Overview: The record gives the reactivity of an RNA of 177 nucleotides to 2A3 and DMS. The reactions ran in a buffer of 150 mM KOAc, 10 mM MgCl2 and 150 mM bicine (pH 8.5), at 24 C. For 2A3 the reverse transcriptase was SuperScript II with manganese. Source: RMDB library OK1LIB, as collected in RNAgym.
RNA sequence: GGGAACGACUCGAGUAGAGUCGAAAAGGAAGGGUAUUUUUUGUCGGUGCUUGUGCCGUGGUUACACCCUGUAAAAAGGCGGGUAAAUACCACUUCGUGUUCGUGUGUCGAUUUUCGCUCGAAAUGGCAUCGAGCGUACUUUCGAGUACGCUCGAUGAAAAGAAACAACAACAACAAC
Reactivity to 2A3 in 0.01 (KOAc 150mM, MgCl2 10mM, bicine 150mM(pH8.5), 24C), signal-to-noise 3, nucleotides 027 to 126: g130g010a040a040g050g030g000u050a120u040u140u060u010u070u100g110u040c040g040g070u050g000c060u120u070g060u170g110c010c000g070u050g010g030u050u040a040c040a050c030c010c010u050g040u090a090a080a030a030a000g160g010c040g030g010g020u020a010a100a000u100a040c020c020a120c090u070u100c080g090u030g020u000u050c040g030u060g020u000g010u060c030g010a060u150u000u000u040c020g000c030u010c020g020a060a090a140u130g090g000
Reactivity to DMS in 0.01 (KOAc 150mM, MgCl2 10mM, bicine 150mM(pH8.5), 24C), signal-to-noise 3, nucleotides 027 to 126: g000g040a040a040g020g020g040u000a000u000u010u000u050u040u050g020u000c030g000g030u000g000c100u010u020g020u010g000c010c080g030u010g000g020u020u000a110c170a090c070c000c030u010g010u010a040a030a070a120a070g000g020c100g000g020g030u000a020a020a050u020a130c020c000a140c010u010u010c070g000u000g030u000u020c090g010u020g020u030g000u000c040g000a110u000u000u000u000c030g000c060u020c050g040a040a070a050u050g000g010